The record gives the reactivity of an RNA of 177 nucleotides to 2A3. Values are in units of 0.01, from 0 to 300, in steps of 10. The reactions ran in a buffer of 150 mM KOAc, 10 mM MgCl2 and 150 mM bicine (pH 8.5), at 24 C. The data come from the RNA Mapping Database (RMDB), library OK1LIB.
RNA sequence: GGGAACGACUCGAGUAGAGUCGAAAAUGGCCACGCGGUGACCGUAUCGGCUGGGUCUGACAGCCGGCCGGACGCUUAGUGCUUGUCUGGCUCGACGGCUUCCACGUGCGGCUCGGCCAACGGCGCGGCUCCUCGACCUCUUCGGAGGUCGAGGAGCAAAAGAAACAACAACAACAAC
Reactivity to 2A3 in 0.01 (KOAc 150mM, MgCl2 10mM, bicine 150mM(pH8.5), 24C), signal-to-noise 2, nucleotides 027 to 126: u060g140g090c000c000a070c050g140c060g030g040u030g100a300c000c000g000u060a130u300c130g000g000c000u000g000g020g000u000c070u130g070a000c040a070g000c000c000g000g020c000c000g000g000a010c000g040c020u120u170a110g030u080g300c000u060u300g000u000c000u000g030g000c020u040c160g210a040c000g000g000c000u110u000c130c050a210c070g070u210g040c020g000g000c000u020c000g020g000c000c000a010a010c020g050g030c060g000c020g110